RNA sequence: GGGAACGACUCGAGUAGAGUCGAAAACUCCGACACCUGAUCCGCCAGCGCAGAGAUGUGAGAUCAACGGACGGAAGGCGACGGUGCCCGGCGCGCGCGAGUUGACGCUGCGCGUCGAGCGCGGGGCCCCCUUUCUGACGUUCGCGUCAGAAAGGGGAAAAGAAACAACAACAACAAC
Reactivity to DMS in 0.01 (KOAc 150mM, MgCl2 10mM, bicine 150mM(pH8.5), 24C), signal-to-noise 2, nucleotides 027 to 126: c000u000c010c020g010a160c240a130c050c010u050g020a060u010c030c020g000c050c040a090g000c020g010c040a040g040a100g030a180u030g010u010g010a110g000a090u020c070a110a200c050g000g020a020c030g000g030a050a060g010g010c020g000a140c010g020g100u000g030c020c020c000g000g010c000g010c000g000c020g020c010g030a110g060u040u010g010a220c000g020c000u050g070c000g010c010g000u000c000g000a050g000c000g010c020g020g000g000g000c150
Reactivity to 2A3 in 0.01 (KOAc 150mM, MgCl2 10mM, bicine 150mM(pH8.5), 24C), signal-to-noise 3, nucleotides 027 to 126: c020u010c000c010g030a020c020a020c050c030u020g020a040u040c010c040g010c000c050a050g030c070g020c110a030g060a040g010a180u090g130u030g080a160g030a120u130c040a010a030c050g030g060a060c020g000g050a060a040g060g000c070g060a110c060g000g000u060g010c010c000c000g000g010c000g000c000g000c000g020c010g010a050g080u050u080g070a060c000g020c090u200g000c010g000c000g000u010c000g000a020g000c000g000c020g000g000g030g000c000